Structure probing data (2A3) for a 177-nucleotide construct. For 2A3, 443 sequencing reads were counted. The RNA was probed in 150 mM KOAc, 10 mM MgCl2 and 150 mM bicine (pH 8.5) at 24 C. Values are in units of 0.01, from 0 to 300, in steps of 10. Source: RMDB library RFM100, as collected in RNAgym.
RNA sequence: GGGAACGACUCGAGUAGAGUCGAAAAAUAGCCAGUGCAUUUGAAAACUCCCCGUGCACUAGGGCUGACUGUAGCUGGGGGAAGACAGUUUACUCAUUUGCUCUCUCCUUUCAUACAGUCAGCUGGUUCCACAUGCCGUGUUCGCACGGCAUGUGGAAAAAGAAACAACAACAACAAC
Reactivity to 2A3 in 0.01 (KOAc 150mM, MgCl2 10mM, bicine 150mM(pH8.5), 24C), signal-to-noise 1, nucleotides 027 to 126: a000u160a000g040c060c000a060g000u000g000c000a000u000u190u230g300a070a060a000a070c050u020c000c000c000c000g070u000g110c000a000c000u000a010g080g000g000c000u050g000a000c010u000g000u000a000g000c000u000g120g000g000g000g000a100a010g000a020c010a040g000u040u140u230a230c210u230c090a220u060u140u090g070c100u000c000u040c000u000c000c010u000u000u000c180a220u040a050c000a000g000u000c000a000g000c000u000g020g000u000